[RMDB]
RNA sequence: GGGAACGACUCGAGUAGAGUCGAAAAGAUAUGGAGCGGUACUCAGCAUCGAUCUAUAUUCGGAAACGAAUAUAGGGAGCUGGUACGCCGCUCCUAAGUCAAAGAGAACAGGUUCGCCUGUUCUCAAGGAAUGAAGAUUGUUCGCAAUCUUCAUUCCAAAAGAAACAACAACAACAAC
Reactivity to DMS in 0.01 (KOAc 150mM, MgCl2 10mM, bicine 150mM(pH8.5), 24C), signal-to-noise 3, nucleotides 027 to 126: g000a010u000a010u010g000g010a020g020c000g020g010u000a020c030u030c030a000g020c000a300u010c220g000a010u020c000u000a010u000a010u000u000c000g010g000a000a000a030c000g000a020a010u000a000u000a000g000g010g000a000g040c010u000g010g020u000a040c130g010c140c050g000c000u000c000c000u010a000a060g000u000c010a110a170a150g000a000g020a010a000c000a010g010g010u000u010c300g020c000c010u000g000u010u000c000u000c000a050a050
Reactivity to 2A3 in 0.01 (KOAc 150mM, MgCl2 10mM, bicine 150mM(pH8.5), 24C), signal-to-noise 4, nucleotides 027 to 126: g000a010u010a000u070g000g000a000g020c040g040g020u020a030c290u300c300a010g000c020a050u300c040g000a000u000c000u000a010u000a000u000u000c000g010g000a000a010a010c000g000a000a000u020a000u010a010g000g010g010a010g000c010u000g000g000u030a050c060g000c010c010g000c000u000c000c000u000a000a000g000u000c010a010a080a010g010a000g000a000a000c000a010g030g100u130u150c260g210c070c000u000g000u010u000c000u000c000a010a020